[RMDB]
Structure probing data (DMS and 2A3) for a 177-nucleotide construct.
The RNA was probed in 150 mM KOAc, 10 mM MgCl2 and 150 mM bicine (pH 8.5) at 24 C.
The data come from the RNA Mapping Database (RMDB), library RFM100.
The 2A3 profile rests on 689 reads.
For DMS, 1,327 sequencing reads were counted.
RNA sequence: GGGAACGACUCGAGUAGAGUCGAAAAUCCGAAAGGAGAGGGAACCCCGGGAAUUGAAACAUCUUAGUACCGGGAGGAAGAGAAAUCAAUAGAGAUACCGUUAGUAAAGGCGAUCGAAAGCGGUAGACUCAUGGCUUGGUUUCGACCAAGCCAUGAGAAAAGAAACAACAACAACAAC
Reactivity to DMS in 0.01 (KOAc 150mM, MgCl2 10mM, bicine 150mM(pH8.5), 24C), signal-to-noise 2, nucleotides 027 to 126: u000c000c020g000a040a100a120g000g030a000g020a050g020g000g000a210a030c090c020c000c000g000g000g000a100a100u060u070g020a040a100a100c210a160u000c020u000u040a040g010u020a270c000c040g000g050g000a120g000g000a130a040g000a060g000a010a130a140u010c130a130a030u000a010g000a130g000a210u000a020c000c000g030u000u000a090g000u000a010a180a020g030g020c090g000a070u000c030g010a050a050a290g050c000g000g000u000a000g000a220
Reactivity to 2A3 in 0.01 (KOAc 150mM, MgCl2 10mM, bicine 150mM(pH8.5), 24C), signal-to-noise 1, nucleotides 027 to 126: u000c020c010g020a000a070a000g030g000a100g050a000g000g020g060a040a040c000c000c000c010g000g000g040a000a100u030u080g040a170a120a130c100a210u120c040u000u000a030g000u000a000c000c000g030g100g020a070g000g000a080a020g000a010g000a130a000a000u090c010a030a040u100a040g110a000g010a010u030a050c000c000g000u000u000a010g000u030a040a000a050g100g080c170g130a080u040c000g000a020a010a010g000c000g000g000u000a030g000a010